Chemical mapping of a 177-nucleotide RNA with DMS and 2A3. It was measured as part of the RMDB library OK2TST. Conditions: 150 mM KOAc, 10 mM MgCl2 and 150 mM bicine (pH 8.5), 24 C. For DMS, 31,629 sequencing reads were counted.
[RMDB]
RNA sequence: GGGAACGACUCGAGUAGAGUCGAAAACGUAUCUCUCGUAUCUGGAAAACCGGGUGAGGAAGGAGUUCGGAUUCUCUCACAUCCCCAUCUUCAUCGAUCUGAGGGAAUAGGAUGCCGGUGUACACCAACUAAGGUAAGAGUUCGCUCUUACCUUAGUAAAAGAAACAACAACAACAAC
Reactivity to DMS in 0.01 (KOAc 150mM, MgCl2 10mM, bicine 150mM(pH8.5), 24C), signal-to-noise 9, nucleotides 027 to 126: c130g010u000a080u000c030u000c020u000c100g010u000a050u000c040u010g010g010a100a080a130a120c060c040g010g000g010u000g010a060g010g010a100a080g000g010a100g010u000u000c100g000g000a080u010u000c030u010c020u000c030a060c160a090u000c010c020c020c080a080u000c050u000u000c130a060u000c100g010a040u000c120u000g010a050g000g000g000a030a040u000a100g000g000a060u000g010c030c030g000g010u000g010u010a070c100a130c070c050a120
Reactivity to 2A3 in 0.01 (KOAc 150mM, MgCl2 10mM, bicine 150mM(pH8.5), 24C), signal-to-noise 9, nucleotides 027 to 126: c030g040u070a080u030c030u000c010u000c040g030u050a080u020c030u090g060g030a060a070a060a110c020c020g040g000g010u050g020a040g060g030a040a050g030g030a060g020u090u110c050g060g060a060u060u010c040u000c000u010c030a030c010a100u050c030c010c010c000a050u030c030u120u060c020a110u080c040g050a020u010c040u050g020a050g030g010g020a020a030u040a070g060g020a030u060g040c020c020g030g000u030g020u010a050c080a030c020c010a040